Source: RMDB library OK3TST, as collected in RNAgym. The record gives the reactivity of an RNA of 207 nucleotides to 2A3. Conditions: 150 mM KOAc, 10 mM MgCl2 and 150 mM bicine (pH 8.5), 24 C. For 2A3, 651 sequencing reads were counted.
RNA sequence: GGGAACGACUCGAGUAGAGUCGAAAAGCUGGGGCCGUGGUGCAACGUGGCGAAGAUCGGCUCCGACAGGUCUGUGGUGUUUGCCGCUGGUGGCCCGACGUGGGGCGCGGUAGGGCUGAUCCACCCAGCGCCGGACGCUCCGGUGUAUCUGGUGGCGACCGUAGUGUCAAUUCGUUGACACUACGGUAAAAGAAACAACAACAACAAC
Reactivity to 2A3 in 0.01 (KOAc 150mM, MgCl2 10mM, bicine 150mM(pH8.5), 24C), signal-to-noise 1, nucleotides 027 to 156: g110c070u090g000g030g010g010c030c010g070u030g010g020u080g090c050a180a160c150g090u150g070g020c000g000a030a020g050a080u040c030g000g000c000u000c030c000g000a040c050a020g090g100u070c060u090g040u060g000g000u050g020u050u110u140g020c010c010g050c010u050g050g050u040g080g000c000c000c000g090a160c040g100u180g000g120g000g000c080g000c000g050g050u150a150g060g000g000c060u060g020a060u000c000c000a000c000c000c030a000g020c000g000c000c000g010g010a020c030g000c030u000c000c030g040g000u060g000u070a100u020c020u000g020g000u030g040g080c010g030